[RMDB]
RNA sequence: GGGAACGACUCGAGUAGAGUCGAAAAGAUAAGCUAGCAGCAAAAAGGAACCGAUUCCCACCAAGUUCGGAAAGAGAUACCGGGCGAGGCGCUGGAGAAAGAAUCUCGCUUCAGACACCCCAAGGACAUGACCUUAAAAUGUUCGCAUUUUAAGGAACAAUAGAGUGAGAUUCGUCUCACUCUAUUGAAAAGAAACAACAACAACAAC
Reactivity to 2A3 in 0.01 (KOAc 150mM, MgCl2 10mM, bicine 150mM(pH8.5), 24C), signal-to-noise 5, nucleotides 027 to 156: g030a060u140a090a030g020c020u050a020g030c060a000g000c030a030a040a040a070a050g080g020a060a020c050c020g080a100u050u020c000c000c010a020c020c020a050a030g010u020u030c020g010g020a130a060a020g100a030g010a030u060a110c020c010g020g010g010c030g010a020g030g010c050g000c080u060g030g010a050g040a020a130a010g060a070a120u040c050u030c090g030c000u050u050c040a030g040a080c020a080c030c020c010c010a030a040g050g000a020c040a110u110g100a060c000c000u000u000a000a000a010a000u010g010u040u080c150g000c100a010u000u000u000u000a010a000g000g000a040a010
Reactivity to DMS in 0.01 (KOAc 150mM, MgCl2 10mM, bicine 150mM(pH8.5), 24C), signal-to-noise 3, nucleotides 027 to 156: g010a150u010a060a120g000c040u000a100g020c050a110g030c040a040a110a080a130a120g000g020a100a130c060c050g000a150u000u000c000c010c000a120c080c030a100a260g030u000u000c020g030g010a050a090a140g010a160g000a180u010a090c040c000g030g010g000c030g000a200g010g000c050g010c070u000g030g010a080g000a080a050a100g020a070a110u000c040u000c030g010c050u020u000c010a070g010a210c050a060c030c020c030c030a050a080g010g010a100c040a120u000g000a130c030c000u000u000a000a000a020a030u000g000u010u010c300g020c000a010u000u000u010u010a010a010g000g010a050a140

The record gives the reactivity of an RNA of 207 nucleotides to 2A3 and DMS. DMS adducts were read by reverse transcription with MarathonRT. Reactivities are given for positions 27 through 156. For 2A3 the reverse transcriptase was SuperScript II with manganese.